[RMDB]
RNA sequence: GGGAACGACUCGAGUAGAGUCGAAAAGACUACGGGUUCGCCCGUAGUCACUUACCCAGAAUGCGACUCGGUAUAUAACGCAAACCCUUGGAAACAAGGGAAUCACCAGUUCCUUCGGGAACUGGAAUGAAACGUAGUCUUUCGAGACUACGUUUCAAAAAGAAACAACAACAACAAC
Reactivity to DMS in 0.01 (KOAc 150mM, MgCl2 10mM, bicine 150mM(pH8.5), 24C), signal-to-noise 2, nucleotides 027 to 126: g010a010c000u000a000c000g000g000g000u010u020c300g020c000c000c010g010u000a010g020u000c010a000c090u010u000a120c000c010c000a100g020a060a040u000g000c010g000a110c040u000c110g010g010u000a080u010a060u010a040a110c110g010c060a140a130a150c000c000c010u000u000g010g000a160a070a150c030a010a010g000g010g000a020a040u000c170a230c000c000a000g010u020u000c000c000u000u020c140g010g020g030a000a000c000u000g010g000a010a100
Reactivity to 2A3 in 0.01 (KOAc 150mM, MgCl2 10mM, bicine 150mM(pH8.5), 24C), signal-to-noise 1, nucleotides 027 to 126: g010a000c000u010a000c000g070g000g000u020u090c230g070c040c000c000g000u000a000g000u000c000a000c000u030u080a050c010c000c010a010g110a080a050u090g000c010g080a050c070u040c080g070g100u010a130u030a040u050a240a030c120g000c000a070a070a230c000c000c010u000u000g000g020a050a000a000c010a000a000g000g000g000a000a010u000c030a000c010c000a010g010u000u000c000c030u050u150c250g070g010g000a000a000c010u020g000g000a010a070